Structure probing data (2A3 and DMS) for a 177-nucleotide construct.
[RMDB]
RNA sequence: GGGAACGACUCGAGUAGAGUCGAAAAGAUGACCGGUUCGCCGGUCAUCAAAUAGGGAAACGGCGUGCGCGGCACCGUCCGCGGUACAAACGGAAAAUAAAAAAACGCUAACCUUCGGGUUAGCGAACUUAUACAAAGCGUUCGCGCUUUGUAUAAGAAAAGAAACAACAACAACAAC
Reactivity to 2A3 in 0.01 (KOAc 150mM, MgCl2 10mM, bicine 150mM(pH8.5), 24C), signal-to-noise 3, nucleotides 027 to 126: g000a010u000g000a000c000c010g030g030u050u040c140g000c080c000g000g000u000c010a000u000c000a000a000a010u060a020g040g020g030a060a110a030c030g040g020c050g020u110g020c020g010c000g010g000c090a070c110c020g090u080c010c000g010c040g020g040u070a020c020a020a160a020c040g040g060a080a050a060a010u270a040a140a020a000a000a000a010c010g000c010u000a000a000c010c020u030u050c220g130g000g000u010u010a000g010c000g000a000a000
Reactivity to DMS in 0.01 (KOAc 150mM, MgCl2 10mM, bicine 150mM(pH8.5), 24C), signal-to-noise 3, nucleotides 027 to 126: g000a010u000g000a000c020c000g020g000u010u010c190g010c010c000g000g000u000c010a000u000c000a020a060a070u020a110g010g010g000a070a070a090c090g010g000c090g010u000g030c060g000c000g000g010c020a130c080c060g000u000c010c010g010c010g030g020u010a050c170a030a070a050c020g000g000a080a090a110a090u040a030a020a090a070a060a110a080c020g020c000u000a000a000c000c000u000u010c200g010g010g010u000u000a000g000c010g000a010a020

Source: RMDB library M2PK50, as collected in RNAgym.